[RMDB]
RNA sequence: GGGAACGACUCGAGUAGAGUCGAAAAGAUAUGGAGCGAGCAACAGCGGUGACGUCGGAAACGACGUACCGACAUGCUCCUCCUAAGUCAAAACGAAUACGAACAGCUUCGGCUGUUCGUAUUCGAACUUUUUAAAUCCCUUCGGGGAUUUAAAAAGAAAAGAAACAACAACAACAAC
Reactivity to DMS in 0.01 (KOAc 150mM, MgCl2 10mM, bicine 150mM(pH8.5), 24C), signal-to-noise 1, nucleotides 027 to 126: g000a020u000a300u020g000g020a010g020c140g000a020g010c000a060a070c300a190g010c040g000g050u000g010a060c000g040u000c010g000g000a080a050a240c000g010a020c000g010u000a000c010c000g000a040c130a180u000g010c000u010c000c000u010c000c030u000a000a040g020u000c030a080a070a080a230c000g000a020a010u000a010c000g010a010a030c010a010g030c010u010u000c170g010g030c000u000g030u010u000c010g000u000a000u000u000c010g010a030a070
Conditions: 150 mM KOAc, 10 mM MgCl2 and 150 mM bicine (pH 8.5), 24 C. An RNA of 177 nucleotides, treated with DMS and read out base by base. Reactivities are given for positions 27 through 126.